[RMDB]
RNA sequence: GGGAACGACUCGAGUAGAGUCGAAAAUUCGCGUGAUUCGUCACGCGAAGAUUUCCGAGAACCGUGCUCGGUAUAAACAUGGAACCCUUGGAAACAAGGGAAAUAGGCAGGCCUUCGGGCCUGCCAAUCAUCCUAUAUGAUUCGUCAUAUAGGAUGAAAAAGAAACAACAACAACAAC
Reactivity to 2A3 in 0.01 (KOAc 150mM, MgCl2 10mM, bicine 150mM(pH8.5), 24C), signal-to-noise 3, nucleotides 027 to 126: u000u000c000g000c000g010u000g010a020u020u060c150g040u010c110a000c020g000c000g000a000a000g000a010u030u040u020c000c010g000a020g000a060a090c000c020g020u030g010c010u010c010g010g030u090a100u080a070a050a010c010a050u040g030g050a080a070c020c000c000u000u000g010g000a060a040a010c000a010a000g000g000g000a010a030a010u040a000g000g000c030a000g030g050c000c010u080u150c210g020g000g000c030c010u000g000c020c000a000a000
Reactivity to DMS in 0.01 (KOAc 150mM, MgCl2 10mM, bicine 150mM(pH8.5), 24C), signal-to-noise 5, nucleotides 027 to 126: u000u000c000g040c000g020u000g000a020u000u010c160g010u000c000a010c000g010c000g020a000a010g010a170u000u000u000c010c000g010a030g000a100a120c020c010g020u000g010c010u000c010g010g010u010a050u000a060a050a100c050a010u000g000g010a200a300c000c000c000u000u000g010g000a170a100a190c000a000a010g000g000g010a010a050a070u010a090g000g000c000a000g010g000c010c000u000u020c190g030g030g020c010c010u000g000c000c010a000a030